[RMDB]
RNA sequence: GGGAACGACUCGAGUAGAGUCGAAAAGUGGACGUUCUUUCCUGUUGAAAAGAGAACAAAACCCUCAACAAGGAGCAGCUGGAGACAAACUUGGAGCGAGGAAAAGCAGAAAGUGUUGCGAAGCAUAAUCAUUUAAAUCACAGAUUAAGUCAACAUAUCCCAUAAAUGAUUUCGAUCAUUUAUGGGAAAAAGAAACAACAACAACAAC
Reactivity to DMS in 0.01 (KOAc 150mM, MgCl2 10mM, bicine 150mM(pH8.5), 24C), signal-to-noise 2, nucleotides 027 to 156: g040u000g000g060a160c050g000u010u000c010u000u010u000c000c000u040g010u000u000g010a150a060a060a100g030a130g030a070a090c060a050a120a100a120c020c000c060u000c060a080a070c060a090a060g010g010a090g020c070a060g000c040u020g030g050a130g060a080c040a030a060a170c100u000u000g020g010a040g020c000g020a030g010g000a010a020a150a060g000c000a030g000a040a030a040g000u000g010u000u000g020c210g010a040a090g020c030a020u000a040a040u010c060a120u010u000u010a030a050a100u000c060a060c060a060g020a060u020u000a020a060g020u000c030a030a000c060a060u000a210
Reactivity to 2A3 in 0.01 (KOAc 150mM, MgCl2 10mM, bicine 150mM(pH8.5), 24C), signal-to-noise 2, nucleotides 027 to 156: g120u100g030g040a040c050g000u040u000c020u050u070u070c020c020u020g050u020u000g010a080a070a030a020g060a020g030a030a020c030a040a080a040a050c030c010c020u070c030a030a110c040a050a040g030g000a020g040c040a010g000c030u090g060g030a100g030a040c070a050a060a020c020u010u060g000g020a030g000c020g000a040g000g000a000a000a030a000g000c000a010g010a040a010a010g040u090g000u060u050g020c010g010a010a000g020c020a020u040a030a010u030c020a010u010u130u130a060a090a030u090c030a030c010a030g110a070u050u080a000a050g000u090c000a000a000c000a030u300a120